[RMDB]
RNA sequence: GGGAACGACUCGAGUAGAGUCGAAAAAGGGAUCCCCGAGACGCUGGAGGAGCACCGGGAAAAAGAAAAGAAGGCAAGGAAUUGGUAGAAAAGAGCGAGCCUCCCGAUACGAGUUUGCCAGGACCUAAACGCUUAUUCUUCGGAAUAAGCAAAAGAAACAACAACAACAAC
Reactivity to 2A3 in 0.01 (KOAc 150mM, MgCl2 10mM, bicine 150mM(pH8.5), 24C), signal-to-noise 8, nucleotides 027 to 129: a000g050g000g010a040u050c000c000c000c010g040a020g020a050c060g030c090u060g010g040a060g010g020a030g020c020a020c030c000g000g010g000a030a070a020a000a010g110a010a030a000a010g060a010a010g010g000c050a010a010g020g000a030a050u100u080g040g010u130a070g090a050a090a030a010g060a010g030c070g000a000g010c000c000u030c000c010c000g020a030u040a070c090g020a040g040u020u060u040g070c040c020a020g000g030a020c010c010u070a090a050a010c100
Reactivity to DMS in 0.01 (KOAc 150mM, MgCl2 10mM, bicine 150mM(pH8.5), 24C), signal-to-noise 9, nucleotides 027 to 129: a030g040g010g010a090u020c020c020c000c050g020a040g020a090c160g040c070u000g040g020a040g030g010a060g040c060a080c040c010g040g020g050a020a050a050a080a040g020a040a040a050a040g030a040a030g010g010c070a050a040g020g040a040a040u030u020g040g000u010a060g030a050a080a070a080g020a060g030c060g010a060g030c060c030u030c040c020c020g000a080u060a030c110g020a060g030u000u030u010g040c050c040a000g000g000a110c040c050u000a040a050a070c150